[RMDB]
Chemical mapping of a 177-nucleotide RNA with 2A3. The RNA was probed in 150 mM KOAc, 10 mM MgCl2 and 150 mM bicine (pH 8.5) at 24 C. It was measured as part of the RMDB library OK1LIB. For 2A3, 628 sequencing reads were counted.

RNA sequence: GGGAACGACUCGAGUAGAGUCGAAAACGCGCUGCCCGGCAACGACAUGCCGAGCGCCUCGGCGGCGCUGGCCAUGGUGUUAGCGGUGUACAUGCCGCCGCAUGCCCCUUCGCCGGGGCAGAUUGCCGGUCGCCAUCACAUUCGUGUGAUGGCGACCAAAAGAAACAACAACAACAAC
Reactivity to 2A3 in 0.01 (KOAc 150mM, MgCl2 10mM, bicine 150mM(pH8.5), 24C), signal-to-noise 2, nucleotides 027 to 126: c080g070c000g000c030u080g070c000c000c000g060g000c020a010a010c030g130a050c010a010u020g000c000c040g240a010g000c000g010c000c020u120c150g220g150c170g000g000c000g060c000u010g030g000c130c000a010u090g000g020u140g030u060u160a030g020c000g000g000u040g020u130a170c180a200u300g010c020c000g040c000c000g000c000a000u030g000c000c000c000c000u030u050c040g050c030c000g000g000g000g000c000a000g010a140u110u100g030c000c030